Chemical mapping of a 177-nucleotide RNA with DMS and 2A3. For 2A3 the reverse transcriptase was SuperScript II with manganese. It was measured as part of the RMDB library 15KREP.

[RMDB]
RNA sequence: GGGAACGACUCGAGUAGAGUCGAAAAAGCAGACAUUUGCUACAAGUUCGUCCUUUGGGAUUAUGAACGUAGCAAUAUUUAUGGUACUGCUACUAUUGGUGUAUGUAAGUACACUGAUAUUGAUGUUCACAUAGAAAACGUUCGCGUUUUCUAUGUGAAAAGAAACAACAACAACAAC
Reactivity to DMS in 0.01 (KOAc 150mM, MgCl2 10mM, bicine 150mM(pH8.5), 24C), signal-to-noise 2, nucleotides 027 to 126: a080g020c010a010g000a120c030a110u000u000u000g010c000u000a010c010a040a150g020u000u000c000g020u000c010c000u000u040u010g040g010g000a010u010u010a010u030g010a000a020c030g000u010a000g030c000a010a020u020a030u020u010u030a120u010g020g030u000a070c010u000g010c010u000a180c130u000a040u000u000g010g010u000g000u000a000u000g000u030a110a120g000u000a020c000a000c000u010g010a010u000a010u010u000g010a200u000g010u010u000
Reactivity to 2A3 in 0.01 (KOAc 150mM, MgCl2 10mM, bicine 150mM(pH8.5), 24C), signal-to-noise 2, nucleotides 027 to 126: a010g010c000a010g010a000c030a050u020u000u000g000c000u000a000c010a070a170g000u000u000c000g010u000c010c000u060u110u290g200g010g000a020u050u040a090u300g000a020a000c010g000u010a000g000c000a000a010u090a080u050u200u060a070u070g090g000u080a190c000u000g010c000u020a040c030u000a010u000u010g040g000u010g000u010a010u030g120u110a180a100g010u000a000c010a010c030u000g010a000u040a080u060u220g100a130u120g080u040u000